[RMDB]
RNA sequence: GGGAACGACUCGAGUAGAGUCGAAAACAAUUUGUGACGGAGGGGCUGCCCGUUCACCUCAAUCCUUAUAUUGGUGUGGCCCUUAGCCGUGAAACACGCGAUCCGCAGCAGCUACUGCGCCAUGCCACUCGCUAAUAUCAUUCGUGAUAUUAGCGAGAAAAGAAACAACAACAACAAC
Reactivity to DMS in 0.01 (KOAc 150mM, MgCl2 10mM, bicine 150mM(pH8.5), 24C), signal-to-noise 5, nucleotides 027 to 126: c110a090a140u010u010u010g010u000g010a040c080g000g000a140g010g000g000g010c030u010g000c040c020c020g010u000u010c060a060c020c170u010c120a060a080u010c060c060u000u000a130u010a130u000u000g020g030u000g030u000g000g010c000c010c010u010u010a030g010c010c030g020u000g010a090a090a050c170a070c130g000c060g010a100u000c100c070g000c040a150g010c020a070g000c050u000a030c030u000g010c100g020c020c010a040u010g000c030c050a180
Reactivity to 2A3 in 0.01 (KOAc 150mM, MgCl2 10mM, bicine 150mM(pH8.5), 24C), signal-to-noise 5, nucleotides 027 to 126: c030a060a120u100u090u240g070u040g030a020c020g020g020a040g010g020g050g010c020u010g030c000c000c000g020u070u030c020a050c000c030u080c060a070a130u080c000c020u240u160a160u060a070u270u170g000g000u030g000u010g030g000c000c000c000u000u030a020g000c000c010g050u050g080a150a120a010c130a030c080g040c030g070a140u090c090c050g000c020a020g000c000a000g000c000u020a020c030u020g020c010g000c050c000a020u030g010c000c000a050
Chemical mapping of a 177-nucleotide RNA with DMS and 2A3.
The RNA was probed in 150 mM KOAc, 10 mM MgCl2 and 150 mM bicine (pH 8.5) at 24 C.
The 2A3 profile rests on 9,422 reads.
For DMS the reverse transcriptase was MarathonRT.
It was measured as part of the RMDB library OK2TRN.
2A3 adducts were read by reverse transcription with SuperScript II with manganese.